[RMDB]
RNA sequence: GGGAACGACUCGAGUAGAGUCGAAAAGGGGUCCUAAGAGUCCCUUGGAUUUACUUUUGACGAGCUGAAGCCUCCACGGCUCGAUAAGUUGUCAGGGACCUUAGGACGGAGGCACCCAAAACGCUACCGUGUUACGUUCGCGUAACACGGUAGCGAAUCAAUUCGUGUUGUUCGCAACACGAAUUGAAAAAGAAACAACAACAACAAC
Reactivity to 2A3 in 0.01 (KOAc 150mM, MgCl2 10mM, bicine 150mM(pH8.5), 24C), signal-to-noise 3, nucleotides 027 to 156: g070g000g020g000u000c010c000u000a000a020g050a090g030u040c020c010c040u030u140g090g020a110u210u240u170a090c030u090u060u090u150g270a100c020g000a010g000c000u010g010a100a000g010c000c000u000c020c000a040c040g020g000c000u000c000g010a000u010a000a030g090u150u160g260u300c250a080g000g000g000a000c000c000u000u000a000g000g000a000c010g000g000a000g000g000c000a040c000c000c000a050a070a010a030c010g000c000u000a010c000c000g000u000g000u000u020a010c000g010u010u090c270g000c020g100u010a010a000c000a000c000g010g000u000a000g000c000g000a000a000
Reactivity to DMS in 0.01 (KOAc 150mM, MgCl2 10mM, bicine 150mM(pH8.5), 24C), signal-to-noise 1, nucleotides 027 to 156: g020g050g060g070u020c000c010u030a060a060g010a300g000u000c000c020c020u020u020g010g010a120u040u000u000a030c040u020u000u040u040g040a280c140g010a030g040c000u000g000a080a120g030c000c010u000c000c030a300c070g000g020c000u010c000g010a060u000a040a070g000u000u010g000u040c070a090g030g030g030a040c000c010u000u000a000g000g000a060c000g030g010a040g030g010c000a240c030c010c020a110a040a130a130c000g030c010u000a010c000c030g100u010g000u000u000a010c020g030u010u010c300g010c000g040u000a000a010c000a030c010g000g000u010a000g000c000g010a010a040